[RMDB]
RNA sequence: GGGAACGACUCGAGUAGAGUCGAAAAGAUAUGGAUCGACCAGCUCGCAACAGCCGUACGUAUCAGUUAGAUCGGAAACGAUCUAACUGAUACGUACGGACAUGCGAGGCUGCGUCGAUCCUAAGUCGAGGGAAUAAGAGUUCGCUCUUAUUCCCUCAAAAGAAACAACAACAACAAC
Reactivity to DMS in 0.01 (KOAc 150mM, MgCl2 10mM, bicine 150mM(pH8.5), 24C), signal-to-noise 2, nucleotides 027 to 126: g000a130u000a300u010g010g010a010u000c010g010a000c030c000a020g010c020u000c000g030c020a040a080c300a200g000c010c000g000u000a000c000g000u000a000u020c010a010g000u000u010a010g000a020u000c000g020g000a100a130a220c030g010a000u000c010u000a000a000c000u000g000a010u000a010c000g000u000a000c000g000g000a010c070a100u010g000c000g010a030g020g010c020u020g000c250g010u000c000g010a000u000c000c010u000a010a100g000u000c130
This 177-nucleotide RNA was probed chemically with DMS. The reactions ran in a buffer of 150 mM KOAc, 10 mM MgCl2 and 150 mM bicine (pH 8.5), at 24 C.